[RMDB]
RNA sequence: GGGAACGACUCGAGUAGAGUCGAAAAGGGGUCUCGGGAGACGUUGCAGGAGCUUGGACCUAUACUGAAGCCUCCACGGUAUAGCUAGCUCCUGGGACGUCGACGAUCGAGACGGAGGCACCCAAAACGGUACGCGAGCUUCGGCUCGCGUACCGAACUUAUGUAACUGCUUCGGCAGUUACAUAAGAAAAGAAACAACAACAACAAC
Reactivity to 2A3 in 0.01 (KOAc 150mM, MgCl2 10mM, bicine 150mM(pH8.5), 24C), signal-to-noise 1, nucleotides 027 to 156: g060g020g080g020u040c010u020c010g010g040g010a030g000a020c030g010u090u190g150c070a000g010g010a000g000c060u300u300g130g000a010c010c010u000a000u000a020c010u050g060a100a040g000c020c000u000c000c010a000c000g000g010u000a000u010a000g000c040u020a000g010c000u000c000c000u010g000g000g000a000c060g020u000c000g020a010c000g000a010u000c000g000a000g000a010c000g000g010a000g020g000c000a020c000c000c000a070a000a060a010c010g000g040u010a000c010g000c010g000a010g000c040u120u240c300g110g000c000u000c030g000c000g010u000a000c010c000g000a000a000